[RMDB]
The data come from the RNA Mapping Database (RMDB), library M2RFPK. Structure probing data (2A3) for a 207-nucleotide construct.
RNA sequence: GGGAACGACUCGAGUAGAGUCGAAAAGAAAGUUCAAGCAAGCUAGCCGGCAAAAAAACAAACUUGACCACCAAGGAUAAAAGAGAUCUUAUCCAAGGAUGCAAAAGAUAAUCUCACUUUUGACACCAAAACAGGGAGUAGUUCGCUACUCCCUGAACAUCACUGCGUUGUUCGCAACGCAGUGAUGAAAAGAAACAACAACAACAAC
Reactivity to 2A3 in 0.01 (KOAc 150mM, MgCl2 10mM, bicine 150mM(pH8.5), 24C), signal-to-noise 1, nucleotides 027 to 156: g030a010a100a000g000u040u060c020a000a060g060c000a020a040g000c020u030a020g090c040c170g110g060c130a110a000a000a020a000a060a020c090a060a080a050c040u070u050g010a030c000c040a000c010c000a090a040g000g000a020u030a000a000a010a020g190a020g010a040u020c020u000u000a000u010c020c040a010a070g070g000a080u060g000c000a010a010a000a010g020a000u140a170a100u080c060u010c000a070c030u030u040u020u060g050a100c050a050c090c070a050a030a070a030c000a010g000g000g000a000g000u000a000g000u050u060c110g000c100u000a000c000u000c040c000c000u000g000a000a000
Reactivities are given for positions 27 through 156.